[RMDB]
RNA sequence: GGGAACGACUCGAGUAGAGUCGAAAACUAUCUAAUAAUGGAUCAUCAGGUUCAAAAGGUAUACUGACUAACAUUUCACCGAGGUAUGUCCAUGUUCCUAGUUUAGGAUUGAUGACAAAGCCAUUACAUGAGACGAAGAAUUCGUUCUUCGUCUCAUAAAAGAAACAACAACAACAAC
Reactivity to 2A3 in 0.01 (KOAc 150mM, MgCl2 10mM, bicine 150mM(pH8.5), 24C), signal-to-noise 5, nucleotides 027 to 126: c010u030a060u150c030u050a060a130u060a110a020u140g020g000a020u060c010a010u000c020a030g090g000u100u040c030a060a040a040a050g000g040u040a050u040a070c050u040g060a020c020u070a110a040c060a150u090u190u140c120a100c060c090g040a020g010g040u040a020u070g040u000c030c020a030u080g020u020u000c020c000u040a120g140u070u150u140a040g000g030a060u030u020g040a020u020g000a020c050a060a070a010g050c010c010a030u020u070a050c020
Reactivity to DMS in 0.01 (KOAc 150mM, MgCl2 10mM, bicine 150mM(pH8.5), 24C), signal-to-noise 5, nucleotides 027 to 126: c040u000a070u010c080u010a100a140u000a070a020u000g000g000a140u010c030a020u000c030a040g000g000u000u000c060a060a040a110a080g000g010u000a020u000a060c050u000g010a170c080u000a070a090c120a100u010u000u000c130a060c130c050g000a160g010g000u000a040u000g000u010c020c070a100u000g010u000u000c010c000u000a090g010u000u000u000a050g000g030a050u000u000g000a040u010g000a090c240a080a080a140g020c020c010a040u000u000a060c280